This 177-nucleotide RNA was probed chemically with 2A3. The 2A3 profile rests on 577 reads.
RNA sequence: GGGAACGACUCGAGUAGAGUCGAAAACUAUUUAUAGACAGAACAGUGGAAAACGUAUAUCGCUAUAAACCUUAAACGCCGAUUCUUCCAGUCGUACGAUUCCACAUAGGCGAGGCAUAAGCGAAAGCCGAGUCACCUGAUUCGUCAGGUGACUCGGAAAAGAAACAACAACAACAAC
Reactivity to 2A3 in 0.01 (KOAc 150mM, MgCl2 10mM, bicine 150mM(pH8.5), 24C), signal-to-noise 1, nucleotides 027 to 126: c000u000a020u000u080u000a150u140a070g050a060c040a090g150a200a020c030a090g050u000g000g020a140a250a020a050c010g050u020a020u000a000u170c000g050c010u020a010u040a170a070a000c000c000u000u060a100a100a000c060g000c000c000g230a260u100u000c050u000u000c000c000a030g110u010c020g020u200a020c000g010a080u000u000c000c000a000c080a000u000a030g140g000c010g150a000g000g010c000a000u000a050a090g000c000g020a000a000a080g000

For 2A3 the reverse transcriptase was SuperScript II with manganese.